[RMDB]
Structure probing data (2A3 and DMS) for a 177-nucleotide construct. The data come from the RNA Mapping Database (RMDB), library OK2TRN. Conditions: 150 mM KOAc, 10 mM MgCl2 and 150 mM bicine (pH 8.5), 24 C.

RNA sequence: GGGAACGACUCGAGUAGAGUCGAAAAUGAGCCAGGCCCACGGUGAACCGCAGCAGCCCCGGAUGUUCGGCGGCCGACGCCCGUUCGGCCAGCCGGUCAACGUCGCCGAACCGGCCCAUUCGUGCCGAGGCACAAUGGAAUUCGUUCCAUUGUGCCUAAAAGAAACAACAACAACAAC
Reactivity to 2A3 in 0.01 (KOAc 150mM, MgCl2 10mM, bicine 150mM(pH8.5), 24C), signal-to-noise 1, nucleotides 027 to 126: u140g020a010g040c050c020a040g010g070c010c000c000a050c050g030g010u070g040a030a020c000c040g030c020a050g040c060a020g000c020c000c000c060g040g010a040u080g030u060u040c010g040g000c000g000g020c020c010g020a010c010g050c000c110c010g060u100u040c000g020g010c000c020a030g000c000c000g010g000u040c010a040a000c010g070u030c030g010c050c000g010a030a040c030c010g020g000c000c040c000a090u140u130c090g080u130g030c010c010g030
Reactivity to DMS in 0.01 (KOAc 150mM, MgCl2 10mM, bicine 150mM(pH8.5), 24C), signal-to-noise 3, nucleotides 027 to 126: u010g020a120g020c040c020a090g030g010c010c010c040a110c080g000g020u000g000a060a110c040c060g010c050a050g000c070a080g000c030c010c020c050g010g010a090u000g000u010u010c010g010g010c010g000g000c010c010g000a090c110g020c090c070c110g010u010u000c020g000g000c000c020a080g000c030c030g000g000u000c060a060a120c130g010u000c040g020c030c020g010a060a080c070c050g000g010c020c030c040a170u000u000c080g030u000g010c030c040g000